[RMDB]
RNA sequence: GGGAACGACUCGAGUAGAGUCGAAAAAGUGACAUUUGAAGGCCUACUGUGUACUGAACUCGGAACAAAGGGAGUUCUGAGUAACUAUAUAACUUCAGCACAUCUUCUCAGCAACCUGAUGAGGCUGACUUUCAACUCUGUGUAGCCUCUGCAGCAAGUGCGCGCCUCGGUUCGCCGAGGCGCGCACAAAAGAAACAACAACAACAAC
Reactivity to 2A3 in 0.01 (KOAc 150mM, MgCl2 10mM, bicine 150mM(pH8.5), 24C), signal-to-noise 2, nucleotides 027 to 156: a000g030u020g060a010c030a110u000u000u110g040a080a010g010g000c010c010u050a030c060u050g000u030g020u090a080c070u000g030a090a000c000u010c000g020g000a060a010c020a100a290a170g130g060g000a060g000u000u000c020u000g010a020g000u000a070a060c020u020a010u020a050u020a260a080c010u030u000c030a000g010c000a000c000a070u020c030u110u000c030u010c020a050g000c020a000a100c000c040u030g040a080u020g000a020g010g020c020u020g030a090c010u060u240u110c090a020a080c060u140c120u180g130u020g050u130a000g000c000c040u000c010u070g000c020a020g000c000a030a030